[RMDB]
RNA sequence: GGGAACGACUCGAGUAGAGUCGAAAAGGUCGUGAACAAGCCCGGAGUACAUUCCCAAUUGGAACUAGGGAACCCCUCCGGUCUUGUCCAACCUCUGUUUCGGCAGAGGAUACCGUGCUCCACAGCUCAGCUACUAAAUGUUCGCAUUUAGUAGCUGAAAAGAAACAACAACAACAAC
Reactivity to DMS in 0.01 (KOAc 150mM, MgCl2 10mM, bicine 150mM(pH8.5), 24C), signal-to-noise 2, nucleotides 027 to 126: g060g030u000c300g010u000g000a040a010c000a000a010g000c120c000c000g000g020a020g000u000a060c260a300u000u010c000c030c000a050a190u030u000g010g000a080a060c110u020a290g010g000g000a000a000c120c250c300c000u000c000c000g000g000u000c000u000u010g000u000c000c050a260a300c000c000u000c000u000g030u000u000u040c300g000g010c010a050g000a040g010g000a130u000a000c060c040g040u000g030c100u000c030c090a080c130a120g010c230u000
Reactivity to 2A3 in 0.01 (KOAc 150mM, MgCl2 10mM, bicine 150mM(pH8.5), 24C), signal-to-noise 1, nucleotides 027 to 126: g000g010u040c020g150u090g050a090a020c000a010a010g000c040c000c000g000g010a000g000u090a000c030a120u030u000c000c000c030a030a040u090u080g130g100a140a070c100u030a200g000g000g000a010a020c020c040c000c000u000c000c000g000g000u010c000u000u010g000u000c000c000a040a050c010c010u000c000u000g060u010u060u080c160g160g000c000a000g000a000g020g000a000u030a000c000c000g020u040g010c030u060c020c010a130c040a090g020c020u010
Annotation
Conditions: 150 mM KOAc, 10 mM MgCl2 and 150 mM bicine (pH 8.5), 24 C. An RNA of 177 nucleotides, treated with DMS and 2A3 and read out base by base. The DMS profile rests on 555 reads. For 2A3 the reverse transcriptase was SuperScript II with manganese. For 2A3, 2,715 sequencing reads were counted.